[RMDB]
RNA sequence: GGGAACGACUCGAGUAGAGUCGAAAAGCAGAGCAACUGGCAUUUCGGAUUGAAGAUUUAUUGAUGUUGAUCCGACACGAUGAGCGCCUGUUUCAUCCUGCGUUAACCGAGUUGCUCUUAGGUGAAAUACUACUCCCCUAUUCGUAGGGGAGUAGUAAAAAGAAACAACAACAACAAC
Reactivity to DMS in 0.01 (KOAc 150mM, MgCl2 10mM, bicine 150mM(pH8.5), 24C), signal-to-noise 8, nucleotides 027 to 126: g030c140a030g000a030g010c010a020a010c010u000g010g010c040a060u000u000u000c010g020g000a020u000u010g010a040a060g010a100u010u000u010a130u040u020g010a070u010g010u000u000g000a010u000c000c000g010a060c300a030c220g000a030u000g000a170g000c010g000c060c270u000g000u000u000u000c020a020u000c010c050u000g010c050g010u010u010a050a180c030c010g010a010g020u000u000g010c010u000c000u000u000a040g010g010u000g000a050a070a220
Reactivity to 2A3 in 0.01 (KOAc 150mM, MgCl2 10mM, bicine 150mM(pH8.5), 24C), signal-to-noise 5, nucleotides 027 to 126: g100c030a000g000a010g020c000a000a010c010u020g010g030c020a030u040u030u040c020g000g010a010u010u070g100a060a040g070a220u060u240u170a260u200u300g150a120u170g050u100u030g020a010u000c010c010g020a010c020a020c120g010a010u010g010a000g020c010g050c040c100u080g060u050u050u030c010a030u030c000c010u010g000c020g040u040u020a000a010c000c040g130a000g000u010u000g000c000u000c040u020u060a040g000g010u030g060a050a030a000
The record gives the reactivity of an RNA of 177 nucleotides to DMS and 2A3. It was measured as part of the RMDB library OK2TST. Values cover nucleotides 27 to 126. For 2A3, 4,728 sequencing reads were counted. 2A3 adducts were read by reverse transcription with SuperScript II with manganese.